Conditions: 150 mM KOAc, 10 mM MgCl2 and 150 mM bicine (pH 8.5), 24 C. Structure probing data (2A3) for a 207-nucleotide construct. Values cover nucleotides 27 to 156.
RNA sequence: GGGAACGACUCGAGUAGAGUCGAAAAGGCCGAGCCGGGACUACGAGCAACGUUACUCCUCCGCGCUUUCCUCACACACCGGUGCGUUUCGCGGGAUGGAUGACGGGUGCUCCGGAGCGCGCACCGCGGCGGUGGGGUGGCCGGAUCCUCCUCACGAGGUAUUGCUUAUGUUCGCAUAAGCAAUACCAAAAGAAACAACAACAACAAC
Reactivity to 2A3 in 0.01 (KOAc 150mM, MgCl2 10mM, bicine 150mM(pH8.5), 24C), signal-to-noise 2, nucleotides 027 to 156: g040g020c000c070g010a020g020c010c000g000g010g100a060c060u120a020c080g000a000g150c100a120a080c010g060u170u120a070c030u020c030c000u060c010c040g060c000g030c130u090u110u160c000c000u000c000a000c000a010c000a000c030c020g070g000u020g010c020g000u010u090u130c140g000c070g070g000g110a120u130g010g070a020u120g020a070c100g000g020g130u140g050c000u000c000c000g040g010a050g030c060g010c000g010c050a020c000c010g050c030g000g010c130g000g000u020g000g000g000g020u090g000g000c020c000g000g020a000u050c010c000u030c010c030u060c030a080c040g170a080